[RMDB]
Background
This 207-nucleotide RNA was probed chemically with DMS and 2A3. The DMS profile rests on 13,684 reads. The RNA was probed in 150 mM KOAc, 10 mM MgCl2 and 150 mM bicine (pH 8.5) at 24 C.
RNA sequence: GGGAACGACUCGAGUAGAGUCGAAAACCUACUCAAUACGUCCUCGUCGUACAGAACGGUAACAUGUUUUCCGAACAUCCGCGCUUGGGUAUACGAGUAUACCCCUUACCCAACCCUCGCCAACGGGAGUGCAUCCACGAGUUCGCUCGUGGAUGAAACAUAAGAACACUUUCGAGUGUUCUUAUGUAAAAGAAACAACAACAACAAC
Reactivity to DMS in 0.01 (KOAc 150mM, MgCl2 10mM, bicine 150mM(pH8.5), 24C), signal-to-noise 4, nucleotides 027 to 156: c020c020u000a050c040u010c030a080a150u000a070c030g010u000c010c020u010c020g020u000c070g010u000a120c070a100g000a080a120c010g020g000u010a070a110c090a110u000g010u010u000u010u010c040c060g000a100a100c050a060u000c030c010g000c020g030c050u000u000g020g000g050u000a040u010a050c060g010a150g030u000a060u000a100c040c000c010c050u000u000a050c020c010c000a080a090c030c010c010u000c070g000c030c060a070a110c050g020g000g020a090g030u000g020c010a020u000c010c000a010c000g010a030g020u000u010c300g030c010u000c000g040u000g000g010a010u000g010a030a080
Reactivity to 2A3 in 0.01 (KOAc 150mM, MgCl2 10mM, bicine 150mM(pH8.5), 24C), signal-to-noise 7, nucleotides 027 to 156: c010c010u040a030c040u070c050a070a110u080a110c020g050u050c020c010u030c010g060u020c010g010u080a060c030a120g060a160a040c030g030g030u090a070a040c060a140u130g040u040u030u040u040c020c030g010a060a030c020a090u060c030c020g040c010g030c070u060u110g020g010g020u030a030u020a070c100g050a050g120u040a020u060a050c010c010c000c010u050u090a070c020c000c010a000a060c030c000c000u040c010g050c040c010a050a030c020g020g000g020a050g040u070g050c000a000u000c000c000a010c000g010a010g010u080u070c200g050c080u000c000g000u000g000g000a000u000g000a000a010